[RMDB]
RNA sequence: GGGAACGACUCGAGUAGAGUCGAAAAGUCGGCCUGUGCGUGAUGGCCGGUAUGUUGGGACGUCAUGAGCACCGCCGUGACGGCCAUGCCGGACAUCCUCGACCCGAUGUACUGGUUGGGCGCCAACGUAGGGGUAGUCUUUCGAGACUACCCCUACAAAAGAAACAACAACAACAAC
Reactivity to DMS in 0.01 (KOAc 150mM, MgCl2 10mM, bicine 150mM(pH8.5), 24C), signal-to-noise 1, nucleotides 027 to 126: g020u000c030g000g000c100c040u040g020u020g000c010g020u050g030a020u010g000g020c010c030g000g000u020a020u010g000u020u040g000g000g000a080c000g000u000c000a020u000g000a180g060c000a150c080c100g000c040c000g010u000g000a020c020g000g000c020c020a020u000g030c000c000g000g020a030c020a020u010c020c030u000c060g000a090c100c020c060g040a030u020g010u000a040c100u000g000g000u020u000g000g010g010c010g020c040c050a100a090c240
Reactivity to 2A3 in 0.01 (KOAc 150mM, MgCl2 10mM, bicine 150mM(pH8.5), 24C), signal-to-noise 4, nucleotides 027 to 126: g030u020c000g010g030c060c080u110g010u060g040c020g030u170g010a030u010g010g010c000c010g000g000u030a050u080g180u070u190g050g050g090a080c000g000u010c020a010u010g040a070g070c130a190c300c120g000c020c000g000u010g000a020c000g000g010c010c000a000u020g010c010c000g000g000a020c010a020u000c000c000u040c010g110a140c020c020c010g030a040u090g030u120a080c040u050g040g020u050u040g050g000g000c040g050c040c000a050a030c080